[RMDB]
RNA sequence: GGGAACGACUCGAGUAGAGUCGAAAACUAGAGCGCAUCGUGGCCGACCGCACCGGCGUCGAGCCGCGAUGCUGGCACGAGCCGGACUACUCCUGGCAGGAGGCCCCCGAUGCACCCCUCCAAGGGAUAACGGAUCACAGUUCGCUGUGAUCCGUUAAAAAGAAACAACAACAACAAC
Reactivity to DMS in 0.01 (KOAc 150mM, MgCl2 10mM, bicine 150mM(pH8.5), 24C), signal-to-noise 1, nucleotides 027 to 126: c030u000a110g020a110g020c130g000c010a020u000c020g030u020g020g000c000c000g020a050c140c070g020c060a120c250c190g000g000c100g030u010c000g020a120g030c020c020g010c010g000a000u010g010c000u010g020g040c070a130c020g000a110g000c030c020g000g000a170c060u010a090c030u000c040c020u010g010g030c040a090g000g000a170g020g000c040c080c050c000c030g000a070u000g000c050a120c040c020c000c000u000c060c080a110a110g000g130g000a140